Source: RMDB library 15KLIB, as collected in RNAgym. An RNA of 170 nucleotides, treated with DMS and 2A3 and read out base by base. The reactions ran in a buffer of 150 mM KOAc, 10 mM MgCl2 and 150 mM bicine (pH 8.5), at 24 C.

RNA sequence: GGGAACGACUCGAGUAGAGUCGAAAAUCGAAGUCCAAUCAUCUGGCAUGAUUAAGCCAAAUGCUCUUCUUUGUGCUACUUGCCCCUUUGCUAAGGGUGAUAGCUGUUCUUCUAAUUGCAAACAUUCGGGGACGCCCGUUCGCGGGCGUCAAAAGAAACAACAACAACAAC
Reactivity to DMS in 0.01 (KOAc 150mM, MgCl2 10mM, bicine 150mM(pH8.5), 24C), signal-to-noise 3, nucleotides 027 to 129: u040c050g030a000a000g010u030c100c040a140a190u060c050a060u030c080u000g000g010c030a120u170g020a090u120u030a160a110g050c060c010a030a100a080u070g030c160u030c040u060u030c040u060u010u070g010u060g060c000u000a000c140u010u040g010c000c110c000c010u010u030u060g060c080u000a080a150g000g000g000u000g000a010u030a010g000c040u020g030u040u030c030u020u000c070u090a000a170u000u000g050c110a000a090a150c120a120u010u110c000g010g050g050
Reactivity to 2A3 in 0.01 (KOAc 150mM, MgCl2 10mM, bicine 150mM(pH8.5), 24C), signal-to-noise 4, nucleotides 027 to 129: u170c020g010a030a010g010u020c050c070a050a020u300c000a010u000c010u000g020g010c030a070u080g060a180u300u040a090a010g010c010c000a000a010a010u110g000c040u000c000u120u000c000u040u050u050g050u050g030c000u020a030c070u000u010g010c000c000c010c000u020u030u010g010c000u050a000a050g030g020g000u000g000a000u010a000g020c010u020g040u050u010c030u070u020c010u050a120a070u120u100g060c030a030a040a000c030a110u120u180c010g020g000g010